This 177-nucleotide RNA was probed chemically with 2A3 and DMS. It was measured as part of the RMDB library M2PK90. 2A3 is a SHAPE reagent: it acylates the 2'-hydroxyl of flexible nucleotides of all four kinds. DMS adducts were read by reverse transcription with MarathonRT.
RNA sequence: GGGAACGACUCGAGUAGAGUCGAAAAAGCAACGAGUGUGUGUGGGACGUUUUAUCCCAAGCUCUGAGUAGAGCACGCGCUCACUCACACCGCGAGCGAGCAUCAGCAGAGCGCAAACGCUGGUAAACUCCCACAUACCUUUCGAGGUAUGUGGGAGAAAAGAAACAACAACAACAAC
Reactivity to 2A3 in 0.01 (KOAc 150mM, MgCl2 10mM, bicine 150mM(pH8.5), 24C), signal-to-noise 2, nucleotides 027 to 126: a030g110c080a060a050c060g030a070g090u010g000u000g000u000g000u010g010g000g000a030c030g010u020u030u080u240a130u080c000c020c010a010a010g000c010u000c010u100g300a230g120u300a020g150a000g000c020a000c040g060c000g000c020u000c010a000c000u040c000a010c010a000c000c010g090c010g020a020g040c020g040a020g000c010a040u070c020a000g010c030a010g030a020g190c080g000c080a100a060a000c040g010c010u000g000g020u040a020a110a120
Reactivity to DMS in 0.01 (KOAc 150mM, MgCl2 10mM, bicine 150mM(pH8.5), 24C), signal-to-noise 2, nucleotides 027 to 126: a140g030c020a190a030c030g010a250g010u010g000u000g000u010g010u000g020g000g010a090c060g000u030u020u000u000a190u000c020c020c040a080a080g000c000u010c000u000g000a190g010u000a060g010a040g000c000a090c080g020c070g000c000u000c000a000c000u000c010a050c030a020c050c060g010c020g020a170g000c010g000a100g010c080a050u000c040a060g010c040a130g000a050g030c130g010c130a050a090a140c070g000c020u000g000g020u010a080a100a100